[RMDB]
Structure probing data (2A3 and DMS) for a 177-nucleotide construct. The RNA was probed in 150 mM KOAc, 10 mM MgCl2 and 150 mM bicine (pH 8.5) at 24 C. The 2A3 profile rests on 15,139 reads. The data come from the RNA Mapping Database (RMDB), library M2PK90.
RNA sequence: GGGAACGACUCGAGUAGAGUCGAAAAUAAAACAGUGCGUGGUAGCACUACCAUGACCUUGUUUCGGCACAUGGUCAGCCGAGUACAGCUUCGCCUGUACUCAGCGAACAACAACAACAACAAAAAAGAUAAUAUACAAGUUCGCUUGUAUAUUAUCAAAAGAAACAACAACAACAAC
Reactivity to 2A3 in 0.01 (KOAc 150mM, MgCl2 10mM, bicine 150mM(pH8.5), 24C), signal-to-noise 6, nucleotides 027 to 126: u110a000a060a010a020c050a010g010u010g020c020g030u090g110g150u190a030g010c010a010c030u000a020c000c010a040u050g030a030c010c010u040u110g060u080u210u180c090g050g000c060a020c000a110u020g020g010u010c030a010g000c010c010g000a000g000u000a000c000a000g020c030u160u220c130g050c050c000u000g010u000a000c000u000c000a000g000c000g020a010a010c010a010a000c000a000a000c000a000a000c000a030a020c020a060a110a030a020a010a020
Reactivity to DMS in 0.01 (KOAc 150mM, MgCl2 10mM, bicine 150mM(pH8.5), 24C), signal-to-noise 5, nucleotides 027 to 126: u010a070a060a070a100c120a030g020u000g000c010g000u000g020g020u010a140g010c030a030c020u000a050c020c010a110u000g000a240c010c000u000u010g000u000u010u000c110g010g010c080a080c050a010u010g000g010u000c110a100g020c000c030g020a010g010u000a000c000a010g010c020u020u010c290g020c200c000u000g000u000a010c000u000c000a020g010c000g000a080a100c050a040a040c020a020a040c030a030a030c050a010a030c050a010a050a090a090a080a110